The data come from the RNA Mapping Database (RMDB), library OK2TRN. The record gives the reactivity of an RNA of 177 nucleotides to 2A3 and DMS. For 2A3, 947 sequencing reads were counted. The DMS profile rests on 1,569 reads. DMS adducts were read by reverse transcription with MarathonRT.
RNA sequence: GGGAACGACUCGAGUAGAGUCGAAAAGUGCCGAUUGAAAUUCAUGGGAGCCUCUCCAUAAUGGAUGAACGCCGCGCUAGUCCGCGCAGUCGCGACGUAAACGCUCUGUAUUCCCGUUCAGGCCUCAGGACGCUAUAUCAUUCGUGAUAUAGCGUCCAAAAGAAACAACAACAACAAC
Reactivity to 2A3 in 0.01 (KOAc 150mM, MgCl2 10mM, bicine 150mM(pH8.5), 24C), signal-to-noise 1, nucleotides 027 to 126: g070u060g050c020c000g110a110u060u200g050a060a150a180u070u070c030a040u100g030g020g050a010g050c060c010u160c040u000c020c030a120u300a300a160u180g030g010a030u030g030a040a030c000g030c040c010g030c020g000c040u030a050g080u060c070c040g010c030g020c000a000g090u240c000g020c010g010a030c010g010u010a000a000a070c000g010c000u000c000u010g040u050a060u030u030c040c000c000g030u100u080c080a030g020g060c000c030u050c050a020
Reactivity to DMS in 0.01 (KOAc 150mM, MgCl2 10mM, bicine 150mM(pH8.5), 24C), signal-to-noise 2, nucleotides 027 to 126: g000u010g020c040c030g010a120u010u010g000a120a120a050u020u000c020a050u010g000g020g020a070g010c060c060u000c010u010c000c000a150u010a070a100u000g000g000a050u000g010a100a050c070g000c050c000g000c030g010c030u010a120g000u000c070c080g000c110g020c120a050g000u010c020g030c000g000a030c050g010u010a030a080a090c130g000c000u000c020u010g010u020a160u000u000c000c000c030g000u010u010c080a120g000g030c030c050u000c140a220